The data come from the RNA Mapping Database (RMDB), library M2PK90. An RNA of 177 nucleotides, treated with 2A3 and DMS and read out base by base. For 2A3, 3,765 sequencing reads were counted. The RNA was probed in 150 mM KOAc, 10 mM MgCl2 and 150 mM bicine (pH 8.5) at 24 C.
[RMDB]
RNA sequence: GGGAACGACUCGAGUAGAGUCGAAAACAAUUGAGCGUCGCACACACACAGACUAAGUCUGACACUGACAGAGCCUAAACCGCUCUGUCAGUGUGCGAGAAAUCGUUCUUAAUGUGAGCAGAGGAAACACUUCAUCCAUGUUCGCAUGGAUGAAGUGAAAAGAAACAACAACAACAAC
Reactivity to 2A3 in 0.01 (KOAc 150mM, MgCl2 10mM, bicine 150mM(pH8.5), 24C), signal-to-noise 3, nucleotides 027 to 126: c010a000a130u050u140g030a040g070c020g030u030c020g000c000a010c000a000c000a000c000a000c010a050g000a010c020u210a250a050g010u000c010u010g030a030c000a010c050u010g000a000c000a020g000a000g010c000c000u060a060a030a040c020c020g000c010u010c020u010g010u000c000a000g000u000g000u010g000c010g010a000g030a010a080a010u100c030g020u070u010c030u070u180a180a140u140g030u040g080a030g030c070a030g060a020g080g080a010a080a050
Reactivity to DMS in 0.01 (KOAc 150mM, MgCl2 10mM, bicine 150mM(pH8.5), 24C), signal-to-noise 5, nucleotides 027 to 126: c060a070a140u010u010g000a080g040c030g020u000c030g020c030a090c060a070c110a100c170a140c040a010g000a010c020u020a120a100g000u000c010u010g000a060c050a030c030u000g010a000c000a000g010a000g010c010c000u000a070a060a120c300c300g000c000u000c000u000g000u000c010a000g030u000g000u000g000c010g000a020g000a060a110a090u000c020g020u010u000c020u000u000a080a130u000g010u000g010a100g020c040a080g010a080g010g000a050a040a110
Values cover nucleotides 27 to 126.